[RMDB]
RNA sequence: GGGAACGACUCGAGUAGAGUCGAAAAGCGGCCAAGGCCAGCUCCACAUUCCUCCCUCCAGCUCCCCACUUCACCGGAGACCGAGCCCUGCAUGCAGAGGAAGGGCCCCAGCUCCACAGACUGCCAAUAUAAAGCGUUGUUUCGACAACGCUUUAUAAAAAGAAACAACAACAACAAC
Reactivity to DMS in 0.01 (KOAc 150mM, MgCl2 10mM, bicine 150mM(pH8.5), 24C), signal-to-noise 4, nucleotides 027 to 126: g000c070g020g020c030c060a080a130g060g030c050c030a050g000c030u000c040c030a080c170a160u020u000c020c000u000c010c030c000u000c020c030a080g000c040u000c020c010c000c020a110c100u000u010c050a070c100c050g040g010a110g000a090c050c090g050a160g010c030c000c020u000g010c130a070u020g010c090a060g000a150g000g010a190a070g010g000g020c030c010c040c040a090g030c020u000c020c020a060c140a040g000a070c050u020g000c000c050a060a130
Reactivity to 2A3 in 0.01 (KOAc 150mM, MgCl2 10mM, bicine 150mM(pH8.5), 24C), signal-to-noise 2, nucleotides 027 to 126: g050c020g010g000c000c030a070a070g090g030c030c010a030g000c020u020c010c010a050c000a030u070u050c000c000u020c000c010c020u040c030c000a020g010c000u040c020c010c010c020a030c030u070u050c010a070c110c020g020g000a040g090a040c020c020g000a010g050c000c000c000u040g000c020a060u140g030c020a010g020a030g120g040a030a030g000g000g000c000c000c000c000a020g000c010u000c020c000a060c000a020g040a020c030u010g020c000c030a100a000
An RNA of 177 nucleotides, treated with DMS and 2A3 and read out base by base. For DMS the reverse transcriptase was MarathonRT. Conditions: 150 mM KOAc, 10 mM MgCl2 and 150 mM bicine (pH 8.5), 24 C. 2A3 adducts were read by reverse transcription with SuperScript II with manganese. 2A3 is a SHAPE reagent: it acylates the 2'-hydroxyl of flexible nucleotides of all four kinds.